[RMDB]
The record gives the reactivity of an RNA of 207 nucleotides to 2A3 and DMS. The reactions ran in a buffer of 150 mM KOAc, 10 mM MgCl2 and 150 mM bicine (pH 8.5), at 24 C. Values cover nucleotides 27 to 156. As a SHAPE reagent, 2A3 marks flexible, mostly unpaired nucleotides at the ribose 2'-OH.
RNA sequence: GGGAACGACUCGAGUAGAGUCGAAAAGGGAAUGGUGGUUUACCCCGUUAUCAAAUGAUUACCGACCAAUAAUUGGCGAAACUCGUUUCGCGUUGGCUGACUAAUUCAAGGAAUUAGCGUGCCUUCAAAGACAUCAAGAAGUUCGCUUCUUGAUGAACUACACACUGUGCUUCGGCACAGUGUGUAGAAAAGAAACAACAACAACAAC
Reactivity to 2A3 in 0.01 (KOAc 150mM, MgCl2 10mM, bicine 150mM(pH8.5), 24C), signal-to-noise 4, nucleotides 027 to 156: g030g020g020a140a100u150g050g010u050g050g000u020u080u260a090c000c000c000c030g140u060u060a100u160c070a060a070a090u190g010a030u110u050a030c030c030g050a070c030c050a030a050u180a150a050u100u150g040g010c010g010a030a010a040c050u070c100g070u010u000u020c010g000c000g000u010u040g000g000c000u000g030a240c000u080a010a000u040u000c090a180a140g180g000a110a050u000u000a000g010c030g040u050g020c020c000u040u000c020a070a060a030g100a020c000a000u000c000a000a000g000a000a000g000u010u080c150g030c150u000u000c000u000u000g000a000u000g000a010a000
Reactivity to DMS in 0.01 (KOAc 150mM, MgCl2 10mM, bicine 150mM(pH8.5), 24C), signal-to-noise 2, nucleotides 027 to 156: g020g030g000a070a090u000g000g000u000g020g000u000u000u000a010c000c000c000c020g000u020u000a130u000c160a090a080a110u000g000a140u000u000a050c010c020g010a090c060c000a110a160u000a070a200u010u000g030g030c000g010a070a110a020c030u000c080g000u000u000u000c000g010c040g020u000u000g000g010c000u000g000a140c000u010a010a030u000u000c010a200a110g010g000a050a040u000u000a030g040c020g010u000g030c030c030u000u010c060a090a110a190g010a130c000a010u000c020a010a000g010a030a040g010u000u010c300g050c000u000u000c000u010u020g020a010u000g010a020a120